[RMDB]
RNA sequence: GGGAACGACUCGAGUAGAGUCGAAAAGAUAUGGAUCUACCAAGGACGAUAAGUUACUGGUCGGAAACGACCACUAACUUUUGACGUCCGACGUAGAUCCUAAGUCAAACCCGGGUUCGCCCGGGAAGGGCCCAUAUAAGUUCGCUUAUAUGGGCCCAAAAGAAACAACAACAACAAC
Reactivity to DMS in 0.01 (KOAc 150mM, MgCl2 10mM, bicine 150mM(pH8.5), 24C), signal-to-noise 1, nucleotides 027 to 126: g000a110u000a300u000g000g000a000u000c000u000a000c000c050a070a300g000g000a000c000g030a100u000a030a030g000u000u000a000c160u010g090g000u000c030g040g000a060a090a260c000g030a030c000c000a000c160u000a000a000c000u000u020u050u000g040a220c040g000u000c000c000g010a290c300g000u000a000g000a000u000c010c030u000a010a060g000u000c060a090a070a120c010c000c000g000g010g010u000u030c230g000c030c030c030g030g020g000a040a030